RNA sequence: GGGAACGACUCGAGUAGAGUCGAAAAGGUGGGUAUUAAAGGCGAUUAUUUGCCAGACGUGGUGGACGCUACCGCAGGGCUGGGGCGCGAUGCCUUUGUGCUGGCUUCGGUCGGCUGCCGCGUGCGGCGGCCCCUUCUCAUUCGUGAGAAGGGGCCGAAAAGAAACAACAACAACAAC
Reactivity to 2A3 in 0.01 (KOAc 150mM, MgCl2 10mM, bicine 150mM(pH8.5), 24C), signal-to-noise 3, nucleotides 027 to 126: g070g020u070g040g010g020u080a130u100u200a190a080a050g030g020c020g030a020u080u100a130u140u300u140g040c020c020a050g010a040c030g030u040g020g020u030g010g040a020c030g020c060u120a090c030c000g000c040a020g000g060g040c020u060g010g020g000g020c030g000c050g090a050u190g000c010c000u040u060u100g090u060g020c040u020g040g000c000u050u070c020g010g040u020c020g040g050c010u030g030c010c010g030c040g030u060g030c000g030g000
Reactivity to DMS in 0.01 (KOAc 150mM, MgCl2 10mM, bicine 150mM(pH8.5), 24C), signal-to-noise 3, nucleotides 027 to 126: g000g020u000g000g000g010u000a070u010u010a060a090a100g010g000c030g020a080u020u010a180u010u000u000g010c030c010a090g000a060c060g010u010g010g020u000g010g000a070c050g010c120u000a070c010c020g010c070a080g010g010g010c010u000g010g000g000g000c020g030c170g000a080u000g010c020c020u010u000u010g030u010g010c030u000g000g000c030u000u000c060g000g010u000c020g010g000c000u010g000c020c010g010c030g040u000g010c140g000g020